About this RNA:
This 207-nucleotide RNA was probed chemically with DMS. Values are in units of 0.01, from 0 to 300, in steps of 10. Conditions: 150 mM KOAc, 10 mM MgCl2 and 150 mM bicine (pH 8.5), 24 C. Reactivities are given for positions 27 through 156.
RNA sequence: GGGAACGACUCGAGUAGAGUCGAAAACUCAAGUAAUCCUCCCACCUUGGCCUCCCAAAGUGCUAGGAUUAUAGGUAUGAGCUACUGCCCCCAGCCCCCAUUUACAGUUAAUCAUUAUUCCCCUUUUUAUAGCUGGUUAGUAUUCCGUUAUAUGGAAACCGUAAUAAUCCUUCGGGAUUAUUACGGUAAAAGAAACAACAACAACAAC
Reactivity to DMS in 0.01 (KOAc 150mM, MgCl2 10mM, bicine 150mM(pH8.5), 24C), signal-to-noise 1, nucleotides 027 to 156: c020u000c040a010a160g010u010a070a040u010c030c000u010c020c000c020a070c030c020u000u000g010g040c050c080u000c060c000c020a030a060a060g010u000g020c030u010a040g040g020a020u000u000a050u010a110g010g010u010a040u010g020a100g050c000u000a040c070u010g000c020c010c020c010c020a200g020c010c010c000c000c010a100u000u000u020a120c100a040g030u000u000a070a060u000c070a060u000u000a250u000u000c020c000c010c080u000u000u000u000u000a070u000a180g010c020u010g010g000u010u020a080g010u000a110u000u000c000c020g010u000u000a140u010a110u000g010g000a090a120